[RMDB]
RNA sequence: GGGAACGACUCGAGUAGAGUCGAAAAACUAAUGUUGACAAAAUACGCCAGCUUCUCAAAGGUGUCACCCUUGACAAGUUGCGUGAUUAUUUAGCUGACUAUGACGUAGCAGUCACUGCCGGCCCAUGAAGAUGCCGCUUCGGCGGCAUCAAAAGAAACAACAACAACAAC
Reactivity to DMS in 0.01 (KOAc 150mM, MgCl2 10mM, bicine 150mM(pH8.5), 24C), signal-to-noise 1, nucleotides 027 to 129: a040c060u000a150a030u090g020u000u000g010a130c070a200a080a020a070u010a020c030g020c060c020a010g000c010u010u000c290u000c040a030a000a070g020g060u150g050u050c280a050c040c000c010u000u040g020a050c050a020a020g060u000u000g010c080g060u010g050a100u040u000a070u010u010u010a120g070c110u020g020a060c050u040a130u050g010a060c210g010u020a110g000c080a160g020u000c030a000c080u020g000c050c010g050g000c000c000c000a000u020g030a040a140
Reactivity to 2A3 in 0.01 (KOAc 150mM, MgCl2 10mM, bicine 150mM(pH8.5), 24C), signal-to-noise 3, nucleotides 027 to 129: a080c150u210a170a080u120g050u060u050g040a000c000a000a160a000a000u010a060c000g030c040c010a000g000c050u000u000c000u000c000a080a100a000g150g020u130g050u160c100a090c000c000c000u000u000g000a000c000a010a000g000u000u010g050c040g070u020g080a050u040u130a070u030u130u000a000g000c050u050g030a030c040u000a050u220g020a010c040g050u090a020g020c020a020g030u000c040a000c110u000g040c000c060g000g000c000c000c000a020u020g040a010a020